Chemical mapping of a 177-nucleotide RNA with 2A3 and DMS. Values cover nucleotides 27 to 126. For DMS, 11,524 sequencing reads were counted. Source: RMDB library M2PK50, as collected in RNAgym. The reactions ran in a buffer of 150 mM KOAc, 10 mM MgCl2 and 150 mM bicine (pH 8.5), at 24 C.

[RMDB]
RNA sequence: GGGAACGACUCGAGUAGAGUCGAAAAACGACACAAUUCGUUGUGUCGUAAUGGAAAAGGCUAGGACCGGCCAGACAAAGGUCCGAUAAGAUCGAAAGAUCACACGCCACGAAUUCGUUCGUGGCAAUCAUUAGUAGGUUUUCGAACCUACUAAUGAAAAAGAAACAACAACAACAAC
Reactivity to 2A3 in 0.01 (KOAc 150mM, MgCl2 10mM, bicine 150mM(pH8.5), 24C), signal-to-noise 8, nucleotides 027 to 126: a000c000g010a000c000a000c000a010a040u100u100c200g060u100u010g000u000g000u010c000g000u010a020a060u090g020g020a040a060a100a200g010g000c020u070a070g030g000a000c000c010g010g000c000c020a080g040a060c140a040a130a010g000g000u000c000c000g000a040u050a070a090g000a010u010c010g020a060a040a020g010a010u020c010a000c010a010c100g000c000c000a000c000g020a010a020u100u090c180g050u060u000c000g000u030g000g000c000a000a000
Reactivity to DMS in 0.01 (KOAc 150mM, MgCl2 10mM, bicine 150mM(pH8.5), 24C), signal-to-noise 7, nucleotides 027 to 126: a030c000g010a000c010a000c000a010a020u000u020c200g020u000u000g020u000g010u000c000g010u000a020a060u010g010g000a090a080a140a130g000g010c000u010a100g010g000a020c010c000g000g000c010c010a120g010a110c210a030a060a140g000g010u000c000c000g000a080u010a070a060g000a000u000c000g010a120a090a150g000a010u000c000a130c280a080c180g000c000c000a010c010g010a020a020u000u010c160g010u000u000c010g020u000g010g010c000a010a010